[RMDB]
RNA sequence: GGGAACGACUCGAGUAGAGUCGAAAAUGAUUCUCUGCUGGGAUUAUCAAUUUUCCAUGGCAAGGAGUGUGUGGCAGCAUCUUAUGUGUAUUAAUGACUGCUACAUUGAUUGAUCAUUCCAAAGGCCAACAGGUAGGACAUUCGUGUCCUACCUGUUAAAAGAAACAACAACAACAAC
Reactivity to DMS in 0.01 (KOAc 150mM, MgCl2 10mM, bicine 150mM(pH8.5), 24C), signal-to-noise 2, nucleotides 027 to 126: u000g010a170u010u000c010u000c010u010g010c170u010g000g000g010a020u000u000a010u000c030a030a000u010u000u010u000c010c010a130u000g000g000c190a200a130g020g000a060g020u010g020u000g010u010g000g020c000a010g000c030a050u000c120u010u000a010u010g020u010g020u000a090u000u000a050a030u000g000a120c000u010g010c010u010a000c000a010u000u000g000a050u000u000g000a060u000c050a050u000u010c000c000a040a140a220g030g000c060c110
Reactivity to 2A3 in 0.01 (KOAc 150mM, MgCl2 10mM, bicine 150mM(pH8.5), 24C), signal-to-noise 2, nucleotides 027 to 126: u050g010a030u040u000c020u010c030u020g080c010u040g010g000g000a020u020u000a030u030c020a020a020u030u040u210u000c010c050a070u160g140g070c090a070a140g010g000a010g000u010g020u010g020u010g010g020c000a000g010c000a040u000c080u080u150a100u120g300u030g090u070a090u090u100a090a020u030g080a200c040u000g000c000u010a020c010a010u020u050g020a030u000u030g000a000u030c010a000u000u000c000c000a020a050a090g130g010c000c060
An RNA of 177 nucleotides, treated with DMS and 2A3 and read out base by base.
High 2A3 reactivity points to a flexible backbone, as in loops and unpaired stretches.
The data come from the RNA Mapping Database (RMDB), library OK2TRN.
The RNA was probed in 150 mM KOAc, 10 mM MgCl2 and 150 mM bicine (pH 8.5) at 24 C.